[RMDB]
RNA sequence: GGGAACGACUCGAGUAGAGUCGAAAAAUUUACGACUCUCAAGCGAAGCGAGUGCUAGCAUGCUCGAUAGCACUAAACAUAACAGGAAACUGAAAAUCGAGCAAUCGCUAGAGUCGUUCCCAUACAAGAUUUAUGCACAAUUCGUUGUGCAUAAAUCAAAAGAAACAACAACAACAAC
Reactivity to 2A3 in 0.01 (KOAc 150mM, MgCl2 10mM, bicine 150mM(pH8.5), 24C), signal-to-noise 2, nucleotides 027 to 126: a020u130u120u130a050c000g000a000c000u000c010u010c020a010a000g000c020g090a030a010g040c030g090a100g140u180g060c000u010a010g000c020a030u040g000c010u020c020g020a020u050a030g000c020a000c040u060a020a060a040c080a130u180a090a040c010a010g040g050a120a040a030c000u020g030a070a070a050a090u020c010g010a000g010c000a010a050u030c010g000c010u020a000g000a000g020u000c000g000u000u000c000c000c010a000u010a000c010a000a060
Reactivity to DMS in 0.01 (KOAc 150mM, MgCl2 10mM, bicine 150mM(pH8.5), 24C), signal-to-noise 2, nucleotides 027 to 126: a100u010u010u000a150c000g000a000c000u000c020u000c010a240a100g060c040g030a070a140g000c070g000a060g000u040g000c020u000a040g030c040a230u010g000c030u000c030g010a090u000a020g040c010a040c030u010a040a070a100c080a020u000a060a220c060a000g000g000a060a090a150c010u000g000a130a030a100a070u000c010g060a030g020c020a050a060u000c040g000c040u010a100g010a010g000u000c000g010u000u000c000c000c020a020u000a030c300a060a120